[RMDB]
RNA sequence: GGGAACGACUCGAGUAGAGUCGAAAACGCCAAACGGCCGGACGGGUUCGCGGUGCUCUCAGGUGACGACAACCUCACCCUUCCCAUCGUGGCACUGGGAGGAGACGGCGUGGUCUCGGUGGCGAGCCUGGCCUAGCUCAUUCGUGAGCUAGGCCAGAAAAGAAACAACAACAACAAC
Reactivity to DMS in 0.01 (KOAc 150mM, MgCl2 10mM, bicine 150mM(pH8.5), 24C), signal-to-noise 1, nucleotides 027 to 126: c100g050c020c000a030a040a170c160g020g030c040c030g000g000a080c050g020g010g000u000u000c060g030c080g020g010u010g000c110u020c030u000c080a070g000g000u000g000a060c050g010a110c120a090a100c070c130u000c050a100c070c040c080u000u000c010c000c000a080u010c060g000u010g000g020c040a110c130u000g000g020g010a070g000g000a040g040a050c020g000g000c100g030u020g000g010u000c010u000c040g020g020u010g000g000c010g000a060g020c100
Reactivity to 2A3 in 0.01 (KOAc 150mM, MgCl2 10mM, bicine 150mM(pH8.5), 24C), signal-to-noise 1, nucleotides 027 to 126: c050g060c000c000a010a100a080c090g050g010c000c020g090g040a010c020g000g030g020u050u080c020g030c020g110g120u030g040c010u020c010u010c030a030g030g020u040g020a040c100g050a040c060a070a040c050c000u010c040a140c000c000c000u050u000c020c040c000a030u080c120g040u130g100g000c080a030c110u020g000g000g010a000g050g000a020g000a000c030g010g190c020g030u030g030g030u040c050u030c000g010g130u060g000g000c050g010a000g040c050
Record summary:
Conditions: 150 mM KOAc, 10 mM MgCl2 and 150 mM bicine (pH 8.5), 24 C. This 177-nucleotide RNA was probed chemically with DMS and 2A3. It was measured as part of the RMDB library OK2TST. For 2A3, 1,348 sequencing reads were counted.